The record gives the reactivity of an RNA of 177 nucleotides to DMS and 2A3. Conditions: 150 mM KOAc, 10 mM MgCl2 and 150 mM bicine (pH 8.5), 24 C.
RNA sequence: GGGAACGACUCGAGUAGAGUCGAAAAGAAGAGCCGGGCUAACAAAGGUGGGAGGCACCCAACCCUUCGCAAGAGCCGAGUGGGAAGGCUAAGCGAAACCAAGUCAAAAUGGUUAUAAAUAAUGCAACUAUCUGGCUUUAUUCGUAAAGCCAGAUAGAAAAGAAACAACAACAACAAC
Reactivity to DMS in 0.01 (KOAc 150mM, MgCl2 10mM, bicine 150mM(pH8.5), 24C), signal-to-noise 2, nucleotides 027 to 126: g010a080a070g020a090g000c040c050g000g010g010c080u000a080a070c100a060a080a070g000g000u010g000g020g000a060g000g010c080a070c010c020c030a060a130c050c030c030u000u000c020g020c030a080a130g010a080g000c010c000g000a130g030u010g000g000g010a140a180g000g010c030u020a030a240g020c030g010a020a030a050c050c030a040a100g010u000c180a060a030a130a080u010g000g010u000u000a100u010a070a050a060u000a040a080u000g000c120a120a170
Reactivity to 2A3 in 0.01 (KOAc 150mM, MgCl2 10mM, bicine 150mM(pH8.5), 24C), signal-to-noise 2, nucleotides 027 to 126: g010a040a000g020a000g030c040c020g050g000g020c010u090a150a030c030a170a100a030g030g010u030g030g030g000a050g010g000c040a030c000c000c030a080a110c010c010c000u050u030c020g000c030a120a070g010a000g290c020c020g040a040g040u190g010g090g050a040a030g000g000c010u010a060a000g000c000g000a030a000a000c000c010a040a000g130u130c090a060a050a010a100u070g020g000u030u030a080u060a130a110a000u150a080a040u100g020c010a010a030
Description:
It was measured as part of the RMDB library M2PK90. For 2A3 the reverse transcriptase was SuperScript II with manganese. For 2A3, 1,543 sequencing reads were counted.